[RMDB]
RNA sequence: GGGAACGACUCGAGUAGAGUCGAAAACUUCUCAUGACAAUGGCAAAAGUGCAAGAGGGUAGAGUGCAAAUGCAAUGACUCUUAAGUCCGGGACUCAAAAUUUGCACACUGUUACUUCUGCCUACAUCUAUUGGCCAGAAGAAGUCAUGUGGCCUGACUACGUACGAUCAUUCGUGAUCGUACGUAGAAAAGAAACAACAACAACAAC
Reactivity to DMS in 0.01 (KOAc 150mM, MgCl2 10mM, bicine 150mM(pH8.5), 24C), signal-to-noise 1, nucleotides 027 to 156: c010u000u000c020u000c010a280u000g020a080c010a110a070u000g010g010c100a020a100a070a070g020u010g000c000a070a140g040a080g000g040g010u000a020g030a110g040u000g010c030a020a010a060u000g020c090a180a260u000g000a030c040u000c010u000u000a080a170g000u010c130c140g020g020g030a090c080u000c030a050a060a090a090u000u000u000g000c000a000c010a120c050u020g000u000u000a060c010u000u000c000u000g030c080c010u000a080c060a130u000c050u010a150u000u000g000g010c040c050a040g000a120a050g000a080a040g070u000c000a070u000g000u000g000g070c010c010u000g000a300
Reactivity to 2A3 in 0.01 (KOAc 150mM, MgCl2 10mM, bicine 150mM(pH8.5), 24C), signal-to-noise 4, nucleotides 027 to 156: c020u070u040c040u000c020a030u020g020a010c040a040a100u020g000g000c010a000a050a040a060g070u160g040c050a120a050g020a050g040g010g040u070a020g030a020g040u020g010c000a010a060a030u040g010c060a040a130u060g020a010c000u030c000u100u160a150a040g060u080c090c080g020g050g030a070c050u020c080a100a240a050a030u010u000u010g030c000a000c000a000c010u020g030u130u080a110c010u010u030c000u000g020c010c000u040a040c040a080u080c100u130a120u090u110g060g000c020c020a010g030a090a050g060a130a020g060u030c000a010u040g020u040g050g010c020c020u010g050a030